[RMDB]
RNA sequence: GGGAACGACUCGAGUAGAGUCGAAAAGAGCCGGAGCGGCUAGGGGUGGAGCCGAGUUCCGCGAGGAACCCGGCCGGGCAACUCAACCGGCCCGAACCCGACAGCUCACCUCGCAGGCGUCGGUGAGAACGUGGAGAAUAUUCGUAUUCUCCACGUUAAAAGAAACAACAACAACAAC
Reactivity to DMS in 0.01 (KOAc 150mM, MgCl2 10mM, bicine 150mM(pH8.5), 24C), signal-to-noise 9, nucleotides 027 to 126: g010a180g010c000c010g010g010a050g030c080g000g010c020u000a080g010g000g000g000u000g010g010a170g020c000c000g000a050g000u000u000c010c000g000c290g000a240g000g000a010a010c010c020c000g000g020c010c020g000g000g010c010a040a060c060u000c250a100a100c260c210g000g000c000c000c000g020a100a040c010c000c010g000a150c160a100g010c010u010c030a130c160c020u000c070g020c080a100g000g000c040g020u010c050g000g000u010g000a080g000
Reactivity to 2A3 in 0.01 (KOAc 150mM, MgCl2 10mM, bicine 150mM(pH8.5), 24C), signal-to-noise 6, nucleotides 027 to 126: g070a000g010c020c030g030g030a100g050c070g030g000c020u050a080g030g010g000g020u070g050g120a020g000c010c010g000a010g000u010u000c010c000g000c030g020a070g000g000a000a000c000c000c000g000g000c010c000g010g000g000c020a060a060c030u020c070a040a060c030c020g020g000c000c000c000g030a030a030c000c000c010g010a040c040a030g000c000u030c010a040c000c020u040c030g080c100a070g090g000c030g030u060c020g010g030u040g010a060g020